[RMDB]
Structure probing data (2A3) for a 207-nucleotide construct. 2A3 adducts were read by reverse transcription with SuperScript II with manganese. Reactivities are given for positions 27 through 156. It was measured as part of the RMDB library M2RFPK. The RNA was probed in 150 mM KOAc, 10 mM MgCl2 and 150 mM bicine (pH 8.5) at 24 C.
RNA sequence: GGGAACGACUCGAGUAGAGUCGAAAAUGAGAUAGCUAAAUCACCUCGGUAUGAUUAGGGUGAGACCUAGUAACCGUAGGGGUAUUCUCAAAGGAAGCUUUUGCAGUGACGCCCAUGUAAGUGGGAUAAGAACCAACCCACUUCGGUGGGUUGGUAACUUAUCUCGCCGAUUCGUCGGCGAGAUAAGAAAAGAAACAACAACAACAAC
Reactivity to 2A3 in 0.01 (KOAc 150mM, MgCl2 10mM, bicine 150mM(pH8.5), 24C), signal-to-noise 1, nucleotides 027 to 156: u110g000a030g000a010u080a060g100c130u040a000a150a200u130c080a110c080c000u000c000g000g010u130a100u260g120a080u090u070a010g000g010g000u010g160a020g010a010c000c000u000a010g000u060a000a040c080c000g080u110a020g040g010g010g040u060a040u090u000c010u010c000a040a010a000g110g060a050a040g000c070u150u120u130u200g030c150a110g020u060g050a040c100g010c020c000c020a000u040g070u150a170a110g020u040g000g000g020a030u180a040a000g060a000a000c000c000a000a000c000c000c000a020c040u030u040c080g060g010u000g000g000g000u000u020g000g000u000a000a000